An RNA of 177 nucleotides, treated with DMS and 2A3 and read out base by base. The RNA was probed in 150 mM KOAc, 10 mM MgCl2 and 150 mM bicine (pH 8.5) at 24 C. Source: RMDB library RFM100, as collected in RNAgym. Reactivities are given for positions 27 through 126.

RNA sequence: GGGAACGACUCGAGUAGAGUCGAAAAGUAGCAAAUAUUCAAAAGAAUUUACUUUGAAGGCCGAAGUGGAGAAGGGUUCCAUAACAAUGGAAUUCAUUUAUGGGUGAGUCGAUCCUAAGGUCUGGGUUUCAAUUCUGUCUUUCGAGACAGAAUUGAAAAAAGAAACAACAACAACAAC
Reactivity to DMS in 0.01 (KOAc 150mM, MgCl2 10mM, bicine 150mM(pH8.5), 24C), signal-to-noise 2, nucleotides 027 to 126: g040u000a030g010c190a050a110a110u070a010u030u040c080a080a070a110a140g000a030a030u050u020u020a020c020u000u000u010g000a090a100g010g000c000c020g010a070a120g020u010g000g010a080g000a070a060g010g010g000u000u020c000c000a030u010a110a160c300a070a040u000g000g000a000a030u000u000c020a110u000u010u010a040u000g020g050g030u010g010a030g000u000c010g000a100u000c010c000u000a110a100g020g000u010c030u000g000g000g000u000
Reactivity to 2A3 in 0.01 (KOAc 150mM, MgCl2 10mM, bicine 150mM(pH8.5), 24C), signal-to-noise 3, nucleotides 027 to 126: g030u040a000g050c060a060a090a000u160a100u160u090c020a090a150a080a000g100a040a030u090u120u010a070c020u040u010u080g020a140a010g020g000c000c020g050a110a060g050u130g060g060a160g060a150a070g020g020g000u000u000c000c000a010u100a090a110c180a180a000u010g000g000a000a000u040u010c020a030u020u120u030a070u210g080g010g000u130g040a020g010u000c000g000a050u000c000c020u000a080a060g020g010u040c060u060g080g000g010u010